[RMDB]
Chemical mapping of a 177-nucleotide RNA with DMS and 2A3. The reactions ran in a buffer of 150 mM KOAc, 10 mM MgCl2 and 150 mM bicine (pH 8.5), at 24 C. The DMS profile rests on 2,770 reads.
RNA sequence: GGGAACGACUCGAGUAGAGUCGAAAAGAUAUGGACGGAGCAACAGCCAUACGGAUUCGGAAACGAAUUUAUGGACAUGCUCCGUCCUAAGUCAAAAUCCGGAAAAGAGUUCGCUCUUUUCCGGAAAGAUGCUACGUUAGUUCGCUAACGUAGCAUCAAAAGAAACAACAACAACAAC
Reactivity to DMS in 0.01 (KOAc 150mM, MgCl2 10mM, bicine 150mM(pH8.5), 24C), signal-to-noise 4, nucleotides 027 to 126: g000a050u010a300u010g010g020a010c020g010g000a000g010c000a030a060c290a150g000c020c000a010u000a060c300g020g000a020u000u000c000g000g000a070a090a130c000g000a020a000u000u000u000a010u000g000g000a060c090a150u000g010c000u000c000c000g000u000c000c000u010a010a050g000u000c030a080a060a080a180u000c000c000g000g000a010a010a010a000g000a010g020u010u020c300g020c000u000c000u000u000u000u000c000c010g000g000a000a000a060
Reactivity to 2A3 in 0.01 (KOAc 150mM, MgCl2 10mM, bicine 150mM(pH8.5), 24C), signal-to-noise 2, nucleotides 027 to 126: g000a040u060a030u090g020g010a000c000g020g020a010g000c010a010a150c080a150g050c020c000a060u070a110c190g160g010a010u020u000c010g010g060a030a060a050c010g000a000a010u030u020u010a020u060g020g000a050c000a030u030g000c000u000c010c000g020u000c000c010u000a000a000g000u000c010a010a000a000a270u040c000c000g000g000a000a020a000a000g050a010g020u130u240c300g050c200u030c010u000u010u000u030c010c000g000g000a000a000a000